About this RNA
Structure probing data (2A3 and DMS) for a 177-nucleotide construct. It was measured as part of the RMDB library RFM100. For DMS, 965 sequencing reads were counted.
RNA sequence: GGGAACGACUCGAGUAGAGUCGAAAAAGCUCCGCGGGAGCGUGGCAAGCCUCACCGAUGCGUUAUCGUAAUCAAGGAUUGUCCAUGUCAUCAGAUGAACACGCGGACGAGUAUUCGCGUUAUAUCGGUGACAGACCGGUUUCGACCGGUCUGUCACAAAAGAAACAACAACAACAAC
Reactivity to 2A3 in 0.01 (KOAc 150mM, MgCl2 10mM, bicine 150mM(pH8.5), 24C), signal-to-noise 1, nucleotides 027 to 126: a000g050c040u000c000c000g000c130g000g080g000a060g020c000g000u020g000g010c000a020a020g070c000c000u010c020a090c000c200g000a000u000g010c130g160u300u230a100u280c070g060u150a080a000u000c070a010a000g000g000a000u010u010g050u000c000c000a100u070g000u070c050a040u010c000a230g000a030u070g060a030a000c050a000c170g000c000g000g000a000c000g000a000g020u120a170u000u000c000g000c110g030u150u000a110u010a020u040c120g000
Reactivity to DMS in 0.01 (KOAc 150mM, MgCl2 10mM, bicine 150mM(pH8.5), 24C), signal-to-noise 1, nucleotides 027 to 126: a120g000c030u050c000c000g020c050g050g020g040a060g000c000g000u010g000g000c020a070a000g000c040c000u000c130a060c230c110g000a010u050g030c030g010u070u020a000u000c030g170u000a030a140u000c120a150a010g080g000a120u000u000g080u060c000c040a030u000g040u000c130a200u000c000a210g080a030u000g000a100a000c240a060c100g000c030g000g020a000c100g030a260g000u000a040u020u000c030g000c070g000u030u000a110u120a100u000c020g000